[RMDB]
RNA sequence: GGGAACGACUCGAGUAGAGUCGAAAAGAUAUGGAUUACUCUUAAGGCAGUGCAUUUGGGAGGAGAACGUCGGAAACGACGUUACUCCGACGAUCAAAUGCACUGCCUUAAGAGGUAAUCCUAAGUCCACCCCUAUGAACUUCGGUUCAUAGGGGUGAAAAGAAACAACAACAACAAC
Reactivity to DMS in 0.01 (KOAc 150mM, MgCl2 10mM, bicine 150mM(pH8.5), 24C), signal-to-noise 1, nucleotides 027 to 126: g000a080u010a300u000g000g030a030u000u000a010c000u000c000u000u000a010a020g030g000c020a020g040u000g000c000a000u000u000u000g010g020g030a030g050g010a010g010a100a000c000g000u010c000g030g020a130a170a300c010g000a010c160g000u000u000a060c020u000c000c000g000a060c270g000a040u000c010a020a010a010u000g000c000a010c010u000g010c000c000u010u000a000a000g000a000g010g000u010a000a000u000c000c010u000a040a090g010u000c010